[RMDB]
RNA sequence: GGGAACGACUCGAGUAGAGUCGAAAAUGCCUUAGGAGGCAGUUACAAAUAAUGUCUAAGGAGGGGCUGGAUUCUUUUCCUCUCUAAAAUGGAGAUAACAUCUAUUGCACAGAGCUGCAGGGACACUAAUGAGAUGAUGCACGUAGCUACCCACUGCACGUAAGGGUCAGUUCGCUGACCCUUACGUAAAAGAAACAACAACAACAAC
Reactivity to 2A3 in 0.01 (KOAc 150mM, MgCl2 10mM, bicine 150mM(pH8.5), 24C), signal-to-noise 1, nucleotides 027 to 156: u120g000c040c010u140u130a080g040g020a000g000g050c020a010g010u060u080a100c060a060a090a000u100a130a060u070g040u020c040u050a040a040g050g000a020g020g000g010g000c060u030g020g060a050u080u080c030u080u070u000u030c020c020u010c050u000c040u040a000a160a000a180u070g100g000a040g020a020u180a190a010c010a030u000c030u180a080u120u180g030c020a110c070a090g020a020g040c100u040g000c030a040g000g000g150a000c020a000c080u140a070a270u160g060a000g000a070u020g030a020u060g000c010a000c050g020u010a000g000c000u030a020c010c010c010a020c000u070g080c080